[RMDB]
RNA sequence: GGGAACGACUCGAGUAGAGUCGAAAAGAGCUCAGGUGUGUUCAACGCCGUCCGGCAGCUGGGGGCUGUGCUGGGGAGCGCGAGCAUGGCCGCGUUCAUGACGUCGCGCAUCGCCGCCGAGAUGCCCGAGGGACUAAGGGUUCGCCCUUAGUCCCUCAAAAGAAACAACAACAACAAC
Reactivity to 2A3 in 0.01 (KOAc 150mM, MgCl2 10mM, bicine 150mM(pH8.5), 24C), signal-to-noise 2, nucleotides 027 to 126: g030a030g030c010u040c080a070g010g000u040g000u030g000u220u240c140a120a030c060g000c040c010g070u040c010c000g050g030c030a040g000c060u070g040g000g000g080g030c000u070g000u050g060c090u190g000g010g000g000a040g030c010g020c000g000a020g000c060a030u070g040g000c010c110g090c050g030u090u060c030a010u080g110a120c030g140u050c010g000c010g030c010a100u030c060g070c030c000g060c010c000g020a050g020a090u160g020c060c020c040
Reactivity to DMS in 0.01 (KOAc 150mM, MgCl2 10mM, bicine 150mM(pH8.5), 24C), signal-to-noise 1, nucleotides 027 to 126: g000a130g010c030u010c030a100g010g000u000g030u010g020u020u010c120a130a090c130g030c030c030g020u000c050c070g020g020c050a050g020c030u020g000g000g000g000g000c030u000g000u000g000c010u010g060g000g010g010a090g000c010g000c010g020a070g010c020a030u000g020g000c000c230g010c190g010u000u000c020a030u000g000a090c050g010u000c050g000c040g000c000a160u000c080g000c020c010g000c010c020g010a100g020a110u000g000c010c020c090
An RNA of 177 nucleotides, treated with 2A3 and DMS and read out base by base. The reactions ran in a buffer of 150 mM KOAc, 10 mM MgCl2 and 150 mM bicine (pH 8.5), at 24 C. 2A3 adducts were read by reverse transcription with SuperScript II with manganese.